[RMDB]
RNA sequence: GGGAACGACUCGAGUAGAGUCGAAAAGUAAAUAAAGCGCACCAAGAUGGAGGUGCGCAACCAGCGUGUCCAUGGUUCACGCAUCCACGCGUCUACCAAGACGCGAAUGGUAAUACAAAUAAAAAAACAUGUACAAGGGAUUCGUCCCUUGUACAUGAAAAGAAACAACAACAACAAC
Reactivity to DMS in 0.01 (KOAc 150mM, MgCl2 10mM, bicine 150mM(pH8.5), 24C), signal-to-noise 3, nucleotides 027 to 126: g020u010a080a090a140u000a050a090a130g000c000g000c000a010c000c000a150a070g030a230u000g010g010a160g000g020u000g010c000g030c000a010a010c040c030a130g020c020g010u000g000u000c040c120a070u000g010g020u010u010c020a000c010g010c010a070u000c050c080a070c030g010c000g020u000c020u000a120c300c270a080a070g010a020c010g010c000g010a020a030u000g000g010u000a030a070u000a060c150a040a070a090u060a020a010a030a100a050a090a150
Reactivity to 2A3 in 0.01 (KOAc 150mM, MgCl2 10mM, bicine 150mM(pH8.5), 24C), signal-to-noise 4, nucleotides 027 to 126: g020u060a010a080a170u130a110a140a000g000c000g010c010a000c010c000a040a030g140a140u220g100g100a080g030g010u000g000c000g010c000a000a000c000c010a020g020c010g010u010g010u010c040c060a140u090g100g000u040u040c010a000c000g000c000a040u020c020c010a040c030g000c010g010u000c000u030a090c000c040a050a010g000a000c000g010c000g020a020a060u040g000g000u030a050a020u150a090c050a000a110a030u200a080a140a010a010a010a010a010